About this RNA: Source: RMDB library 15KLIB, as collected in RNAgym. The record gives the reactivity of an RNA of 170 nucleotides to DMS and 2A3.
RNA sequence: GGGAACGACUCGAGUAGAGUCGAAAAAGAAGGUUCAAGAGAAUACAAGAAAUGGAGGAAUUUCCCCAUAACGCCGGUGAAACUCUUGGAAGCGGAAGAAGGAAGGCGGAGAAAAGGAGCGGGCCCUAGACCGACAGGUUCGCCUGUCGGAAAAGAAACAACAACAACAAC
Reactivity to DMS in 0.01 (KOAc 150mM, MgCl2 10mM, bicine 150mM(pH8.5), 24C), signal-to-noise 5, nucleotides 027 to 129: a050g000a030a070g010g050u000u010c030a010a050g000a040g000a080a070u000a110c070a040a060g030a040a070a040u050g000g000a080g010g000a080a080u010u020u010c010c020c000c090a070u040a060a090c150g000c000c010g000g000u000g000a030a040a080c060u000c040u000u010g030g020a000a100g030c110g000g000a040a020g000a020a040g060g020a040a030g020g040c080g030g000a060g000a020a070a060a050g040g000a000g000c000g020g020g030c030c000c040u030a120g040a090
Reactivity to 2A3 in 0.01 (KOAc 150mM, MgCl2 10mM, bicine 150mM(pH8.5), 24C), signal-to-noise 2, nucleotides 027 to 129: a000g070a040a000g070g000u080u100c020a030a000g010a000g000a050a070u110a100c040a040a030g050a070a070a040u110g010g020a040g020g050a040a040u060u050u090c000c010c010c000a030u080a090a040c060g020c030c010g000g010u080g020a070a050a040c050u040c000u020u040g020g020a040a000g050c060g020g000a010a010g010a010a010g030g010a000a000g020g000c040g020g000a020g010a010a050a000a000g010g000a010g010c010g000g010g000c000c000c000u040a070g040a070
2A3 adducts were read by reverse transcription with SuperScript II with manganese.